Chemical mapping of a 177-nucleotide RNA with DMS and 2A3. The 2A3 profile rests on 12,589 reads. The data come from the RNA Mapping Database (RMDB), library VIROID. The reactions ran in a buffer of 150 mM KOAc, 10 mM MgCl2 and 150 mM bicine (pH 8.5), at 24 C.
[RMDB]
RNA sequence: GGGAACGACUCGAGUAGAGUCGAAAACACUCGAUGAUGCACAACUCCAGGGCCAGUGUCAAAAGUACCGCCCUGUGUCUUGUCUCCUCGUGGUGUCGAAGCAAUGGCGGAGUCCUAGGCACCACAGCUUAUCUAAAUCCUUCGGGAUUUAGAUAAGAAAAGAAACAACAACAACAAC
Reactivity to DMS in 0.01 (KOAc 150mM, MgCl2 10mM, bicine 150mM(pH8.5), 24C), signal-to-noise 6, nucleotides 027 to 126: c090a110c050u010c040g020a080u010g010a100u010g000c140a040c030a030a040c030u010c020c020a010g000g000g020c020c140a080g010u000g020u010c070a060a080a130a180g020u010a030c010c190g010c010c010c020u010g000u010g000u000c070u000u000g010u000c030u000c020c080u010c100g010u000g010g010u000g020u000c010g000a140a080g010c100a060a070u000g000g010c030g010g010a100g010u000c010c010u000a150g010g000c010a010c000c010a010c050a080g000
Reactivity to 2A3 in 0.01 (KOAc 150mM, MgCl2 10mM, bicine 150mM(pH8.5), 24C), signal-to-noise 2, nucleotides 027 to 126: c050a030c030u050c040g120a140u120g020a030u130g070c100a010c000a060a040c020u000c020c010a020g000g010g000c060c110a120g030u050g030u210c040a150a230a080a070g040u080a050c000c010g000c000c000c000u010g030u020g010u010c020u020u040g020u010c020u000c030c020u070c070g000u010g000g000u010g000u000c010g040a030a010g010c040a040a080u300g050g000c130g250g170a090g060u080c000c000u010a000g000g000c000a000c010c000a010c000a000g000